RNA sequence: GGGAACGACUCGAGUAGAGUCGAAAAGAUAUGGAAGCUUCGAAGAACAUAUGCACGUUGAUCUCGGAAACGAGGGAGUGUAAUAUGGGAGAAGCUUCCUAAGUCAAAAGCAUUCUUCGGAAUGCAACUCAUUAUAGGGCUUCGGCCCUAUAAUGAGAAAAGAAACAACAACAACAAC
Reactivity to DMS in 0.01 (KOAc 150mM, MgCl2 10mM, bicine 150mM(pH8.5), 24C), signal-to-noise 2, nucleotides 027 to 126: g010a030u010a300u010g000g010a030a000g010c000u000u010c000g000a150a130g000a170a160c000a020u000a000u000g000c000a000c000g000u000u030g010a010u000c000u000c010g000g000a110a090a180c020g000a030g000g000g000a020g010u000g000u010a060a060u000a020u000g000g000g020a130g000a030a010g000c000u000u000c000c000u000a000a060g000u000c030a060a060a120a150g000c000a000u000u000c000u000u000c230g040g000a010a020u000g010c000a090a070
Reactivity to 2A3 in 0.01 (KOAc 150mM, MgCl2 10mM, bicine 150mM(pH8.5), 24C), signal-to-noise 2, nucleotides 027 to 126: g000a030u070a030u150g010g010a000a020g010c010u030u010c030g210a300a150g020a110a000c000a010u040a010u000g000c000a000c000g190u300u040g010a010u030c000u000c010g000g030a030a090a040c010g000a010g000g000g010a030g000u000g000u040a290a130u000a020u000g000g000g000a050g000a000a010g050c000u000u000c000c000u020a010a000g010u000c010a000a100a110a070g010c010a000u000u010c020u040u090c250g130g020a000a010u020g000c010a020a010